This 177-nucleotide RNA was probed chemically with DMS and 2A3.
[RMDB]
RNA sequence: GGGAACGACUCGAGUAGAGUCGAAAAUGCCGCGGGCGUAGCAUCAAAUUAAUUAAAUUGUAUUUUUGAUGCGCGGCCAGCAACUAAGCUGGCAAAUAUAAAACCAAGUUGAAGACAUAGUCUGAACAAUCACCCCUAUAUUCGUAUAGGGGUGAUUAAAAGAAACAACAACAACAAC
Reactivity to DMS in 0.01 (KOAc 150mM, MgCl2 10mM, bicine 150mM(pH8.5), 24C), signal-to-noise 3, nucleotides 027 to 126: u030g020c000c010g010c110g000g000g000c020g020u000a100g010c000a000u000c000a000a020a020u010u010a050a090u000u030a070a100a140u050u100g020u010a070u020u000u000u010u000g000a000u000g010c000g030c060g010g000c000c000a030g020c020a090a110c260u040a100a100g000c030u000g000g000c000a030a040a040u020a110u000a050a100a110a140c080c050a100a080g000u000u000g010a060a050g000a050c040a060u030a100g000u000c040u000g000a030a090c210
Reactivity to 2A3 in 0.01 (KOAc 150mM, MgCl2 10mM, bicine 150mM(pH8.5), 24C), signal-to-noise 1, nucleotides 027 to 126: u040g010c050c050g060c130g000g000g000c000g000u010a020g000c000a010u000c000a000a110a000u090u170a040a090u060u100a040a130a100u060u220g170u220a090u050u050u000u000u000g000a030u030g000c010g000c040g000g090c000c000a000g010c000a000a160c030u220a050a050g000c000u010g000g000c010a010a150a000u190a000u090a000a030a000a050c040c000a090a030g080u090u030g120a080a010g040a040c000a050u100a020g060u000c030u000g030a040a080c060

Description: Conditions: 150 mM KOAc, 10 mM MgCl2 and 150 mM bicine (pH 8.5), 24 C. For 2A3, 558 sequencing reads were counted.